An RNA of 207 nucleotides, treated with 2A3 and DMS and read out base by base. Source: RMDB library M2RFPK, as collected in RNAgym. Reactivities are given for positions 27 through 156. For DMS the reverse transcriptase was MarathonRT. For 2A3, 1,242 sequencing reads were counted.
[RMDB]
RNA sequence: GGGAACGACUCGAGUAGAGUCGAAAAGUUAUGCUCUCGCUGCCUAAUGGCGGUGCGGGAAACCCACUCUAAAGUCCUUAGGGUUAGCCCCUUAAGGCGGGGUUCGGAGGCACCUGGCUACAGAAGCUGAAACUGUGCACAUUCGUGUGCACAGUAAUCCUAACGAAACAUUCGUGUUUCGUUAGGAAAAAGAAACAACAACAACAAC
Reactivity to 2A3 in 0.01 (KOAc 150mM, MgCl2 10mM, bicine 150mM(pH8.5), 24C), signal-to-noise 2, nucleotides 027 to 156: g070u130u120a090u230g020c010u030c000u000c040g020c040u050g000c000c020u300a300a210u300g000g000c060g020g070u020g000c030g000g000g010a020a010a050c020c000c010a050c030u070c080u170a170a120a260g300u040c000c000u030u010a010g000g010g050u010u070a030g000c040c020c000c000u000u020a000a000g010g020c000g000g010g000g000u000u160c060g090g010a040g010g020c000a000c010c000u010g100g000c000u010a000c030a010g010a000a000g000c030u000g040a110a000a000c010u000g000u000g020c000a000c000a010u030u030c100g170u030g000u010g000c000a010c000a000g000u000a000a010
Reactivity to DMS in 0.01 (KOAc 150mM, MgCl2 10mM, bicine 150mM(pH8.5), 24C), signal-to-noise 1, nucleotides 027 to 156: g000u000u010a050u000g040c000u010c020u000c000g000c010u000g040c010c020u000a120a140u000g010g050c010g010g020u000g030c070g040g000g010a030a040a180c000c000c010a080c080u000c070u000a080a050a140g000u010c000c000u040u000a030g000g010g030u000u010a220g000c220c270c010c000u010u010a010a030g010g060c000g010g000g000g020u010u000c020g030g000a300g030g000c050a000c020c030u030g010g010c020u020a300c040a090g000a060a150g010c020u000g010a150a040a060c000u000g010u010g000c020a020c000a110u000u010c300g040u000g000u000g000c010a010c010a010g000u010a020a060